Chemical mapping of a 177-nucleotide RNA with 2A3 and DMS. For 2A3, 9,112 sequencing reads were counted.
[RMDB]
RNA sequence: GGGAACGACUCGAGUAGAGUCGAAAAGAUAUGGAGCCAAGUUGUGAUACUGUGGUCGGAAACGACCAUUAUCGAAUUGGCCUCCUAAGUCAAAACUCAUUCUAGGGCUUCGGCCCUAGAAUGAGAAGUUGUAAUAACUCUUCGGAGUUAUUACAACAAAAGAAACAACAACAACAAC
Reactivity to 2A3 in 0.01 (KOAc 150mM, MgCl2 10mM, bicine 150mM(pH8.5), 24C), signal-to-noise 4, nucleotides 027 to 126: g030a010u080a040u170g020g000a010g020c010c020a030a040g180u240u120g200u150g130a020u040a090c180u220g030u020g070g010u010c020g020g030a070a080a040c000g000a000c000c010a010u010u020a010u010c000g020a030a100u000u000g000g040c060c030u000c000c000u020a100a040g070u040c030a000a010a050a180c010u000c000a000u010u000c010u000a010g020g000g000c000u060u080c300g090g000c000c000c010u010a010g000a000a010u000g000a000g000a010a010
Reactivity to DMS in 0.01 (KOAc 150mM, MgCl2 10mM, bicine 150mM(pH8.5), 24C), signal-to-noise 6, nucleotides 027 to 126: g000a040u010a300u000g000g000a040g010c000c010a000a020g010u010u000g020u010g010a000u000a010c300u010g040u000g000g000u000c000g010g000a090a100a230c000g010a000c000c000a000u000u000a000u000c000g000a080a110u000u000g000g010c100c050u000c000c000u000a050a090g010u000c030a100a070a140a160c000u000c000a000u000u000c000u000a000g000g000g020c020u000u010c220g030g010c000c020c010u000a000g000a000a000u000g010a000g010a000a050